[RMDB]
RNA sequence: GGGAACGACUCGAGUAGAGUCGAAAACGGGCCGCGAGCUGAUGCGCAUCGAGUUUUGGACGAUCACGUUGUCCGCGGCGACCGGCACGCACGUGGAGACGGCCAUCACGUCGCCGAGCAUCCGCGCGGGUGGAGUGGAGUUCGCUCCACUCCACCCAAAAGAAACAACAACAACAAC
Reactivity to DMS in 0.01 (KOAc 150mM, MgCl2 10mM, bicine 150mM(pH8.5), 24C), signal-to-noise 1, nucleotides 027 to 126: c030g000g000g000c030c000g000c130g000a170g000c050u020g070a020u000g000c060g010c220a040u000c070g010a070g000u000u010u050u040g020g120a030c040g010a050u080c010a190c050g000u060u000g020u000c050c040g000c040g030g000c090g000a060c300c120g000g020c010a030c030g020c050a000c060g020u000g000g000a160g000a170c110g000g000c030c010a130u000c200a040c300g000u020c020g010c010c000g020a040g000c160a190u060c000c070g010c000g000c040
Reactivity to 2A3 in 0.01 (KOAc 150mM, MgCl2 10mM, bicine 150mM(pH8.5), 24C), signal-to-noise 3, nucleotides 027 to 126: c020g000g030g000c020c020g000c000g070a020g000c070u130g090a100u120g030c030g000c010a020u060c070g060a080g100u130u100u160u130g060g040a040c010g060a020u020c080a020c100g040u060u140g070u020c000c020g020c000g000g000c010g000a080c010c000g010g000c050a020c080g060c020a060c030g030u050g010g000a040g000a020c000g000g060c010c010a050u140c050a020c070g090u050c020g020c000c020g010a030g030c000a040u000c000c000g010c000g000c020